[RMDB]
RNA sequence: GGGAACGACUCGAGUAGAGUCGAAAAGGGGCUGAUUUUGGUUUCGACUGCGUGCAUUAAGCUAGGGGAAGCGUGCCGGUGCAGGCUAGAGACCACCGAUUUUAAGCGUCGUAGCAAAUAUAUAAGCGCAGAGAACACUCAGCGCGACUACGCCCUCGACACGAUGAAUCUUCGGAUUCAUCGUGUCAAAAGAAACAACAACAACAAC
Reactivity to 2A3 in 0.01 (KOAc 150mM, MgCl2 10mM, bicine 150mM(pH8.5), 24C), signal-to-noise 2, nucleotides 027 to 156: g040g000g010g000c040u020g060a080u050u090u170u250g050g020u040u040u020c040g070a090c020u070g000c020g080u000g000c030a060u240u000a170a030g020c090u100a040g020g030g030g040a060a020g000c010g060u030g070c010c010g000g020u060g000c000a000g060g000c060u010a000g000a000g000a040c000c040a040c000c020g020a040u000u170u040u240a040a040g000c030g030u010c000g000u000a010g000c010a000a030a000u120a020u030a000u020a190a000g000c010g000c020a000g020a000g000a140a010c100a070c150u020c030a000g000c010g000c010g020a000c000u090a010c010g030c000c010c040u040c010

Overview:
The record gives the reactivity of an RNA of 207 nucleotides to 2A3. The RNA was probed in 150 mM KOAc, 10 mM MgCl2 and 150 mM bicine (pH 8.5) at 24 C. It was measured as part of the RMDB library RSTRND. For 2A3, 1,086 sequencing reads were counted. Reactivities are given for positions 27 through 156.